[RMDB]
RNA sequence: GGGAACGACUCGAGUAGAGUCGAAAAAGCGCCAGUACAAGUCGCACCGAACUGCGCGGUAACAGUGGGAAAAAUAGCGACAGCAGCUUCGCGCAGUUGAGUCCUGGUCUGAACGCCGGAGCUUGGCAUCCCCUAAACCGUUCGCGGUUUAGGGGAUAAAAGAAACAACAACAACAAC
Reactivity to DMS in 0.01 (KOAc 150mM, MgCl2 10mM, bicine 150mM(pH8.5), 24C), signal-to-noise 2, nucleotides 027 to 126: a140g000c080g000c010c000a060g010u050a070c100a080a100g010u030c020g000c070a110c060c040g030a050a010c010u000g000c000g020c030g000g010u040a090a110c120a010g000u000g000g000g000a020a000a050a100a150u030a060g000c060g020a100c160a080g000c170a220g010c050u000u010c020g000c000g000c000a020g010u000u020g000a090g010u000c020c010u000g020g000u000c060u000g020a090a090c020g020c020c030g000g000a080g010c000u040u050g000g030c050
Reactivity to 2A3 in 0.01 (KOAc 150mM, MgCl2 10mM, bicine 150mM(pH8.5), 24C), signal-to-noise 2, nucleotides 027 to 126: a010g110c080g010c020c010a010g020u050a020c010a050a060g080u060c010g000c030a050c010c000g050a020a010c000u000g000c000g030c060g010g030u160a150a050c150a050g140u120g000g070g140a080a110a030a010a060u290a080g000c010g110a060c110a060g110c030a010g000c000u020u050c000g000c000g000c040a010g000u000u050g030a000g010u060c040c040u070g010g020u000c040u010g010a030a010c020g010c050c000g020g030a080g000c050u070u100g030g000c000